An RNA of 177 nucleotides, treated with DMS and 2A3 and read out base by base. It was measured as part of the RMDB library M2PK50. The DMS profile rests on 13,639 reads. The RNA was probed in 150 mM KOAc, 10 mM MgCl2 and 150 mM bicine (pH 8.5) at 24 C.
[RMDB]
RNA sequence: GGGAACGACUCGAGUAGAGUCGAAAAGCAAGAUGCUUCGGCAUCUUGCAGUCGUAGCGCGAUCGACAGAAUUAGAGCUAUGUCGAACGAGGAAGAGCGCGCACAUCAUCCCUUUCGAGGGAUGAAACCUAAGAUUGUGUUUCGACACAAUCUUAGGAAAAGAAACAACAACAACAAC
Reactivity to DMS in 0.01 (KOAc 150mM, MgCl2 10mM, bicine 150mM(pH8.5), 24C), signal-to-noise 8, nucleotides 027 to 126: g010c000a010a010g000a000u010g020c000u000u010c190g040g010c000a000u000c000u000u010g010c000a050g010u000c030g010u000a060g020c010g010c000g010a120u000c000g000a020c010a020g000a100a160u000u000a120g010a140g010c110u000a100u000g000u000c000g010a020a070c050g000a150g010g010a090a060g010a110g000c000g000c020g010c020a090c190a160u000c000a000u000c000c000c000u000u000u000c150g010a020g010g000g000a010u000g000a010a100a140
Reactivity to 2A3 in 0.01 (KOAc 150mM, MgCl2 10mM, bicine 150mM(pH8.5), 24C), signal-to-noise 8, nucleotides 027 to 126: g010c000a000a000g010a010u010g000c010u060u140c230g100g000c000a000u000c000u000u000g000c000a000g040u030c040g020u040a030g000c000g000c000g020a040u020c000g000a000c000a010g110a070a030u170u200a140g040a030g150c090u080a040u080g010u010c010g010a030a050c040g020a100g130g130a090a040g030a030g080c020g000c010g010c010a020c010a060u020c000a000u000c000c000c000u010u030u040c220g090a020g000g010g000a000u000g000a040a030a010